[RMDB]
RNA sequence: GGGAACGACUCGAGUAGAGUCGAAAAUUAAAGAAUUGUCGUUGGGAUGCUACGCAAUUAAAUACAUGUGUGACGUGUAUUUGCGAUCGACGUAAUUCAAUAGCAGAAAGAUCAAAAGAUCAAAAAACUUGUAAAAUGGAUUCGUCCAUUUUACAAGAAAAGAAACAACAACAACAAC
Reactivity to DMS in 0.01 (KOAc 150mM, MgCl2 10mM, bicine 150mM(pH8.5), 24C), signal-to-noise 2, nucleotides 027 to 126: u000u010a080a080a280g000a060a040u000u000g010u010c000g000u000u010g010g000g020a120u010g030c120u010a120c060g010c050a110a070u000u000a100a040a010u000a000c010a010u000g020u010g050u000g020a040c020g010u000g000u000a010u000u000u000g000c030g000a130u010c010g010a030c010g010u000a020a050u000u000c020a050a220u000a050g000c140a100g000a070a120a080g000a020u000c030a050a060a070a140g000a030u010c010a000a070a100a090a050a150
Reactivity to 2A3 in 0.01 (KOAc 150mM, MgCl2 10mM, bicine 150mM(pH8.5), 24C), signal-to-noise 2, nucleotides 027 to 126: u070u030a070a010a040g030a020a040u030u020g160u140c000g000u020u050g070g030g030a070u130g090c040u090a050c030g000c030a010a050u190u100a140a050a020u040a000c010a000u040g060u030g150u200g290a040c040g020u000g000u000a000u010u040u070g000c030g010a030u040c010g020a020c000g000u000a010a000u020u020c030a020a050u060a060g000c020a020g110a090a240a010g010a010u020c020a010a210a220a200g000a010u000c010a000a090a030a020a000a120